RNA sequence: GGGAACGACUCGAGUAGAGUCGAAAAGGGGUCGGUGACAUGGAGUUCCCAGAGGCAUCGAUCGUACCUGAAGCCUCCACGGGUACGGGAGCCUCUGCACUCCAACAGCACCGACGGAGGCACCCAAAACCACACAACGCUUCGGCGUUGUGUGGAAGAAUUCAUGUACGUUCGCGUACAUGAAUUCAAAAGAAACAACAACAACAAC
Reactivity to 2A3 in 0.01 (KOAc 150mM, MgCl2 10mM, bicine 150mM(pH8.5), 24C), signal-to-noise 2, nucleotides 027 to 156: g020g020g080g030u000c000g000g000u020g010a100c150a300u300g010g000a030g000u040u060c060c100c000a010g010a000g000g000c010a050u300c300g000a020u000c000g010u010a000c000c010u020g030a120a010g020c010c000u010c010c000a000c010g000g020g000u000a000c000g000g000g000a000g000c000c000u000c010u010g000c000a000c000u000c000c010a130a060c070a060g000c000a000c000c010g000a000c000g000g000a000g020g000c010a030c020c000c000a010a040a010a040c000c020a000c000a000c000a010a000c000g000c040u060u110c260g140g000c000g000u000u000g010u000g000u000g000g000a000a030